[RMDB]
RNA sequence: GGGAACGACUCGAGUAGAGUCGAAAAGCAGUAGUGUUCGCACUACUGCAAAUAAAAAGAGGUGCUAGCUUCACCCUCUAUAAGCAAAGAUCGAAAGAUCAAAAACAUGCUACUUCGGUAGCAUGAACUCUAAGCAUACCUUCGGGUAUGCUUAGAGAAAAGAAACAACAACAACAAC
Reactivity to 2A3 in 0.01 (KOAc 150mM, MgCl2 10mM, bicine 150mM(pH8.5), 24C), signal-to-noise 2, nucleotides 027 to 126: g000c010a010g000u010a000g010u000g040u070u130c250g020c050a000c000u030a010c000u000g000c000a020a020a010u010a000a020a000a000a010g030a040g020g020u080g040c100u130a070g040c040u110u080c000a030c030c090c000u030c010u040a180u010a050a040g070c070a170a060a000g010a020u040c000g040a050a030a040g010a020u000c010a040a000a040a000a020c010a010u010g000c010u000a000c000u060u040c200g110g000u010a000g000c000a000u020g000a020a010
Reactivity to DMS in 0.01 (KOAc 150mM, MgCl2 10mM, bicine 150mM(pH8.5), 24C), signal-to-noise 1, nucleotides 027 to 126: g020c000a000g010u000a000g010u020g030u030u020c220g010c000a010c000u000a000c000u000g020c020a000a070a080u010a090a040a080a130a050g000a050g000g010u010g030c110u000a080g010c110u000u000c080a060c060c050c050u010c050u010a100u020a060a140g050c080a120a130a100g000a020u000c000g000a140a110a120g000a020u020c010a040a060a090a030a230c010a000u000g000c000u000a000c000u000u000c140g020g000u000a000g000c000a010u000g000a020a050